[RMDB]
An RNA of 207 nucleotides, treated with 2A3 and read out base by base. The data come from the RNA Mapping Database (RMDB), library OK3TST. The reactions ran in a buffer of 150 mM KOAc, 10 mM MgCl2 and 150 mM bicine (pH 8.5), at 24 C. For 2A3, 368 sequencing reads were counted. 2A3 adducts were read by reverse transcription with SuperScript II with manganese.
RNA sequence: GGGAACGACUCGAGUAGAGUCGAAAACUACUACAAAUACAAAAAAUUAGCCAGGCCUGGUGGUGCAUGCCUGUCAUCCCAGCUACUCAAGAGGCUGAGGUGGGAGAAUCACCUGAGUCCAGGAGAUCAAGGCUGCAGUGAGUCAUGAUCAUGCCAACCUCCUACUGGGAUUCGUCCCAGUAGGAGGAAAAGAAACAACAACAACAAC
Reactivity to 2A3 in 0.01 (KOAc 150mM, MgCl2 10mM, bicine 150mM(pH8.5), 24C), signal-to-noise 1, nucleotides 027 to 156: c030u190a000c070u160a060c040a110a050a110u260a130c100a100a160a140a050a030a030u220u100a070g020c000c030a070g000g060c010c010u000g010g000u000g010g000u000g070c010a000u080g090c020c000u200g140u150c000a040u040c000c000c000a010g000c010u070a020c050u160c150a070a020g050a070g190g000c040u010g010a000g000g000u000g020g000g010a070g030a040a070u070c000a000c030c010u030g100a050g010u040c050c000a000g090g000a140g000a000u050c040a090a170g030g000c000u040g040c020a040g080u070g180a000g020u030c000a050u100g000a020u020c000a050u110g050c030c000a040a010